[RMDB]
RNA sequence: GGGAACGACUCGAGUAGAGUCGAAAAACGCGGAGUACGCUCCGCGACAACACUUCUUUCGACCCGCUAACCGAGACCUAUGGGUCGUUAAAUUACGUCUCUAUCUUACUCACAUAACAUCGCAUAAAAAACGUGGUUCGGUUCGCCGAACCACGAAGACCUCUUGAUUGUUCGCAAUCAAGAGGUCAAAAGAAACAACAACAACAAC
Reactivity to 2A3 in 0.01 (KOAc 150mM, MgCl2 10mM, bicine 150mM(pH8.5), 24C), signal-to-noise 1, nucleotides 027 to 156: a000c010g000c030g000g000a000g000u030a020c130g020c070u000c000c000g050c010g010a000c000a000a080c030a030c020u080u110c040u100u300u110c030g000a000c050c000c000g040c190u140a010a040c000c070g030a000g010a040c000c000u080a160u160g000g000g020u000c000g050u040u000a000a000a000u220u080a000c000g000u000c010u000c050u090a150u170c030u080u030a090c010u090c070a060c030a150u130a130a020c040a080u140c070g050c100a080u230a040a110a000a040a040a060c030g000u010g010g000u000u000c000g000g000u040u070c150g010c080c000g000a000a000c000c000a000c000g000a000a000

This 207-nucleotide RNA was probed chemically with 2A3.
As a SHAPE reagent, 2A3 marks flexible, mostly unpaired nucleotides at the ribose 2'-OH.
The RNA was probed in 150 mM KOAc, 10 mM MgCl2 and 150 mM bicine (pH 8.5) at 24 C.
It was measured as part of the RMDB library M2RFPK.